[RMDB]
RNA sequence: GGGAACGACUCGAGUAGAGUCGAAAAAGUCAGAGGGCUCUACCAUGCAAACUAGGGCUGGCUACUCUUGCACAGAAUCACAUCUCGAUAAUUGUCAGUGCAAGAAGGACAAUUAUACCAUUUAAUGAAAACGUUUACCUGUUCGCAGGUAAACGAACACUAAUUAAGAGUUCGCUCUUAAUUAGUGAAAAGAAACAACAACAACAAC
Reactivity to DMS in 0.01 (KOAc 150mM, MgCl2 10mM, bicine 150mM(pH8.5), 24C), signal-to-noise 3, nucleotides 027 to 156: a100g030u000c050a120g000a180g020g010g010c030u000c010u000a030c030c020a100u010g030c080a100a060a150c080u000a050g000g020g030c030u010g020g030c020u000a200c020u000c010u010u000g000c020a080c020a110g010a110a110u010c130a090c130a090u000c080u000c070g020a070u000a040a040u000u000g020u000c020a290g010u010g000c030a050a040g010a080a120g000g000a060c030a020a040u000u000a070u000a160c150c050a140u000u000u000a090a130u000g000a070a080a100a160c010g010u000u020u000a000c000c000u000g000u000u010c240g040c010a020g010g020u000a000a000a010c010g000a030a060
Reactivity to 2A3 in 0.01 (KOAc 150mM, MgCl2 10mM, bicine 150mM(pH8.5), 24C), signal-to-noise 9, nucleotides 027 to 156: a000g040u040c030a020g040a120g110g090g020c010u000c000u030a050c060c040a090u210g070c090a130a130a080c060u050a020g000g030g000c010u020g040g000c020u070a070c000u020c000u000u010g000c010a010c000a000g130a080a060u150c050a050c020a210u060c070u070c100g090a040u010a040a010u030u010g010u020c010a010g000u000g000c010a010a010g000a010a010g020g000a000c000a010a010u030u010a030u030a080c020c050a090u110u140u230a190a150u150g100a050a050a020a020c000g000u000u000u000a000c000c000u010g010u050u050c160g010c080a000g000g000u000a000a000a000c000g000a010a000